Description:
Structure probing data (DMS and 2A3) for a 177-nucleotide construct. For 2A3, 6,764 sequencing reads were counted. It was measured as part of the RMDB library OK1LIB. Conditions: 150 mM KOAc, 10 mM MgCl2 and 150 mM bicine (pH 8.5), 24 C.
[RMDB]
RNA sequence: GGGAACGACUCGAGUAGAGUCGAAAAUCGUGAGAUGUGGUGCCUCACGCGCUCGAGGCGUCCGUGGUCAGAGAGACCACUGACGCAAAAACUCGAGCGCAAAUAAAAGGCAUUACAUCUAGAAUAACGUAAAUAUAUAUUUCGAUAUAUAUUUACGAAAAGAAACAACAACAACAAC
Reactivity to DMS in 0.01 (KOAc 150mM, MgCl2 10mM, bicine 150mM(pH8.5), 24C), signal-to-noise 3, nucleotides 027 to 126: u020c090g020u050g030a000g000a030u000g020u010g000g000u000g020c010c010u020c110a190c250g010c000g000c020u030c000g010a000g000g000c000g010u010c000c060g040u000g010g000u010c010a210g040a270g020a120g050a000c010c000a000c020u010g030a020c000g040c080a070a010a020a080a300c010u010c010g010a020g030c000g000c000a000a040a060u020a080a130a120a040g000g020c000a000u000u000a000c000a010u010c010u000a020g010a080a110u010a040a140
Reactivity to 2A3 in 0.01 (KOAc 150mM, MgCl2 10mM, bicine 150mM(pH8.5), 24C), signal-to-noise 4, nucleotides 027 to 126: u130c060g030u090g190a040g000a010u000g000u010g000g010u000g000c000c000u050c020a100c140g000c000g000c000u000c000g000a010g010g000c000g000u000c000c000g000u000g000g000u000c040a040g140a070g030a020g000a300c000c000a000c000u000g000a000c000g000c000a090a110a030a030a060c000u010c000g000a000g000c000g000c000a000a010a000u110a000a110a010a000g000g000c000a000u000u010a000c000a000u000c000u010a020g030a030a140u170a110a020